Source information
Source: RMDB library 15KLIB, as collected in RNAgym. This 170-nucleotide RNA was probed chemically with DMS and 2A3.
RNA sequence: GGGAACGACUCGAGUAGAGUCGAAAAGAGAUGCUAGGAGUUGGGGGAGACCGAAGCGAGGAGGAAAGUAAAGAAAGCAACGGGGCUAGCCGUCAGGUGUUCCUCCCCCCGAGAGGGGAAGAGUGAGAGGCGUGGACGUUCGCGUCCACGAAAAGAAACAACAACAACAAC
Reactivity to DMS in 0.01 (KOAc 150mM, MgCl2 10mM, bicine 150mM(pH8.5), 24C), signal-to-noise 4, nucleotides 027 to 129: g010a110g030a070u040g000c090u010a080g030g000a040g000u000u000g000g060g000g030g020a110g010a040c040c030g010a170a050g020c160g010a000g050g010a030g030g000a020a010a040g070u110a070a000a080g080a100a040a030g040c100a060a090c160g000g000g000g000c050u070a010g050c040c040g010u060c170a070g000g030u000g000u060u030c030c070u000c040c020c010c020c020c000g020a100g010a110g000g020g080g010a050a020g000a070g020u050g020a060g020a050g010g030
Reactivity to 2A3 in 0.01 (KOAc 150mM, MgCl2 10mM, bicine 150mM(pH8.5), 24C), signal-to-noise 1, nucleotides 027 to 129: g140a020g000a050u110g020c060u080a020g060g010a070g010u070u040g050g000g000g010g000a030g020a000c000c000g050a030a030g040c040g000a000g000g010a000g000g000a050a000a020g020u110a000a010a000g040a010a030a000g020c010a050a030c030g020g010g000g060c020u030a000g020c000c070g010u030c040a020g040g000u030g010u050u000c000c000u080c000c000c000c000c020c000g120a080g020a080g050g010g000g020a000a020g020a010g000u250g000a080g000a010g000g000